An RNA of 177 nucleotides, treated with 2A3 and read out base by base. Source: RMDB library RFM100, as collected in RNAgym. Conditions: 150 mM KOAc, 10 mM MgCl2 and 150 mM bicine (pH 8.5), 24 C.
RNA sequence: GGGAACGACUCGAGUAGAGUCGAAAAGAUGACAUAAAAGGCCGAAUUGCAGUGUCUCCAUCAACAGUUGGCUCUCUGAGCACACGAUGACAAAACCUCCUGAAGCGAGUCACUGUCUGACCUCAGUAUGGCUGUAGACCUUCGGGUCUACAGCCAUAAAAGAAACAACAACAACAAC
Reactivity to 2A3 in 0.01 (KOAc 150mM, MgCl2 10mM, bicine 150mM(pH8.5), 24C), signal-to-noise 1, nucleotides 027 to 126: g190a010u050g010a060c080a100u160a060a190a000a000g040g030c020c000g030a300a250u100u040g030c050a000g050u000g020u000c000u020c010c000a120u080c000a000a030c040a210g000u120u090g000g000c000u000c000u000c010u200g050a070g040c080a000c000a030c060g040a040u110g000a000c070a000a000a090a090c100c000u040c000c000u160g050a110a000g030c000g060a000g000u000c000a040c000u090g000u010c060u000g020a020c000c000u000c000a110g030u000